This 177-nucleotide RNA was probed chemically with DMS. For DMS, 1,368 sequencing reads were counted. Conditions: 150 mM KOAc, 10 mM MgCl2 and 150 mM bicine (pH 8.5), 24 C. For DMS the reverse transcriptase was MarathonRT. It was measured as part of the RMDB library OK2TRN.
[RMDB]
RNA sequence: GGGAACGACUCGAGUAGAGUCGAAAAAGCCUGAAGAUCAGUAUCGUGCGCCGCCAGGGUACUUCCCUGCCGGGGAGCGUCUCGAGGAGUUUCUGUCUGAUGGUGGCCGCGAGAGCGGGUUCGAGGGUAGCUGAAAACAGUUCGCUGUUUUCAGCUAAAAAGAAACAACAACAACAAC
Reactivity to DMS in 0.01 (KOAc 150mM, MgCl2 10mM, bicine 150mM(pH8.5), 24C), signal-to-noise 1, nucleotides 027 to 126: a140g010c020c000u000g010a220a100g000a000u010c030a030g010u000a160u000c000g010u000g010c150g020c000c010g030c050c010a070g010g030g020u010a050c070u000u000c010c010c000u000g050c250c230g050g010g000g000a070g020c040g030u010c060u000c000g000a080g040g000a100g000u000u000u000c070u010g000u010c000u000g000a180u010g020g010u000g000g000c010c010g030c010g000a030g010a180g030c060g000g010g010u000u000c020g000a270g000g000g010